[RMDB]
The record gives the reactivity of an RNA of 177 nucleotides to DMS. Source: RMDB library TTRINS, as collected in RNAgym. For DMS the reverse transcriptase was MarathonRT.

RNA sequence: GGGAACGACUCGAGUAGAGUCGAAAAGAUAUGGACGUCCCAGGACAUGACUAUACUUUUGAAUCGUCCAGUCGGAAACGACUGGCGAUUCAAAAGUAUAGUCAACAGCCUGAGGACGUCCUAAGUCCUUAAGUUUAUUGUUCGCAAUAAACUUAAGAAAAGAAACAACAACAACAAC
Reactivity to DMS in 0.01 (KOAc 150mM, MgCl2 10mM, bicine 150mM(pH8.5), 24C), signal-to-noise 3, nucleotides 027 to 126: g000a120u000a260u010g000g010a030c000g010u000c000c000c000a010g010g020a040c060a200u000g000a020c000u000a000u000a000c000u000u000u010u000g010a010a010u000c000g000u030c010c000a010g020u000c010g010g010a160a160a260c000g000a010c020u000g000g000c000g010a010u000u000c000a000a000a020a010g000u000a000u000a000g010u000c000a010a040c240a210g000c000c000u000g010a160g010g000a000c000g000u000c000c010u000a020a090g000u000c040
Conditions: 150 mM KOAc, 10 mM MgCl2 and 150 mM bicine (pH 8.5), 24 C.